[RMDB]
RNA sequence: GGGAACGACUCGAGUAGAGUCGAAAAACAGGGCAACUUUCUGGAAGUCACGGUGGCCGACGACGGGCAGGGCCUGGACUACGCCCGCAUCCGCGAGCGGGCGCUGGAGCGCGGGCUGCGUUCGGCGUGUCGACAUGGGAUUCGUCCCAUGUCGACAAAAAGAAACAACAACAACAAC
Reactivity to DMS in 0.01 (KOAc 150mM, MgCl2 10mM, bicine 150mM(pH8.5), 24C), signal-to-noise 1, nucleotides 027 to 126: a070c110a120g020g000g010c060a020a060c080u000u010u010c040u000g010g030a100a080g000u010c050a050c080g000g000u000g000g030c040c010g000a050c070g010a050c100g000g000g030c060a140g010g000g010c000c010u010g030g010a080c020u000a210c160g010c010c000c000g010c000a050u000c040c060g020c040g010a070g020c070g000g010g030c000g010c020u020g030g010a010g000c110g010c030g000g000g000c030u010g020c160g010u010u000c000g000g010c080g000

Overview: Conditions: 150 mM KOAc, 10 mM MgCl2 and 150 mM bicine (pH 8.5), 24 C. The record gives the reactivity of an RNA of 177 nucleotides to DMS. Reactivities are given for positions 27 through 126.